[RMDB]
RNA sequence: GGGAACGACUCGAGUAGAGUCGAAAACAAGCUGCGUUUCAACCUGCGUGGGUUGAGGCGACUUAGCGGAUUAAGGCGUUCUGCCCCAGUGGUCCAUUACCCCAUGCAAAGUCUGCAUGCAGGCGGGCACAUCUUCAGACUUCGGUCUGAAGAUGUGAAAAGAAACAACAACAACAAC
Reactivity to DMS in 0.01 (KOAc 150mM, MgCl2 10mM, bicine 150mM(pH8.5), 24C), signal-to-noise 2, nucleotides 027 to 126: c090a150a080g030c020u000g020c000g030u000u020u000c010a020a020c000c020u010g010c260g020u020g010g020g000u000u010g010a020g010g010c000g020a050c090u000u010a040g010c050g010g000a090u020u000a090a090g020g000c050g010u020u000c110u010g000c020c000c030c030a080g010u000g010g010u010c020c020a110u000u000a100c110c010c080c010a080u010g000c020a040a090a130g000u000c090u000g010c010a040u010g010c110a080g020g010c120g000g000g000
Reactivity to 2A3 in 0.01 (KOAc 150mM, MgCl2 10mM, bicine 150mM(pH8.5), 24C), signal-to-noise 1, nucleotides 027 to 126: c050a000a060g110c030u060g020c050g030u020u060u000c000a020a010c000c000u200g100c300g200u300g060g020g000u000u000g010a000g050g020c020g150a050c010u060u070a010g000c040g000g050a050u130u110a080a060g040g030c070g100u180u030c060u130g020c000c050c000c000a060g020u080g060g000u000c000c020a060u010u110a100c020c010c010c060a020u040g000c000a050a160a090g080u090c110u040g030c000a050u070g030c020a020g000g130c000g000g000g000